[RMDB]
An RNA of 177 nucleotides, treated with DMS and read out base by base. The reactions ran in a buffer of 150 mM KOAc, 10 mM MgCl2 and 150 mM bicine (pH 8.5), at 24 C. DMS adducts were read by reverse transcription with MarathonRT. Values cover nucleotides 27 to 126. The DMS profile rests on 1,445 reads. It was measured as part of the RMDB library TTRINS.

RNA sequence: GGGAACGACUCGAGUAGAGUCGAAAAGAUAUGGACAGAUUCCAAGGUUAGCUCUAUGAAGCCUCGUAACAUCCAUCGGAAACGAUGGUGGAGGUGGAGAGCGAAGCCUUGGAAUCUGUCCUAAGUCGCCUUUAAGUAACUUCGGUUACUUAAAGGCAAAAGAAACAACAACAACAAC
Reactivity to DMS in 0.01 (KOAc 150mM, MgCl2 10mM, bicine 150mM(pH8.5), 24C), signal-to-noise 2, nucleotides 027 to 126: g000a080u000a300u000g050g000a050c010a000g010a000u000u010c000c000a010a000g020g000u000u000a300g000c000u000c000u010a300u000g000a150a300g000c010c000u020c000g010u000a020a030c220a060u010c000c000a020u000c010g010g000a190a050a230c000g030a030u000g000g020u020g000g030a000g010g000u010g000g000a000g010a010g010c000g000a150a140g000c010c000u000u000g000g000a000a000u000c000u000g010u000c000c000u010a000a120g010u010c090